[RMDB]
RNA sequence: GGGAACGACUCGAGUAGAGUCGAAAAGAUAAGCUAAGUACAUGUAUCUAUUCAAGAUCAAAAUGCAAAUAGAACUGAUGCUAUGAAUAAAUUUGCAGAAGCAGAAAGAACAAAAAUUAAUGCAGCAAAUGCACAAAAUCAAAUAGCUGUCAAUGAACACUGAUCCUGGUUUCGACCAGGAUCAGUGAAAAGAAACAACAACAACAAC
Reactivity to 2A3 in 0.01 (KOAc 150mM, MgCl2 10mM, bicine 150mM(pH8.5), 24C), signal-to-noise 1, nucleotides 027 to 156: g010a020u060a010a000g000c030u020a120a000g020u020a090c000a060u130g030u050a210u070c020u010a050u000u100c060a020a020g070a300u050c080a070a160a070a000u140g030c000a030a030a030u020a020g080a080a030c020u030g000a140u140g050c000u090a000u170g020a070a010u050a080a080a030u040u030u060g000c000a000g030a150a000g010c030a000g040a000a030a000g120a000a020c060a030a060a110a060a000u150u260a120a010u020g030c000a000g020c020a020a210a000u050g000c020a050c050a050a140a070a070u110c050a000a080a000u020a050g010c030u000g020u030c030a020a000u110g110a050a020
Chemical mapping of a 207-nucleotide RNA with 2A3. It was measured as part of the RMDB library OK3TST.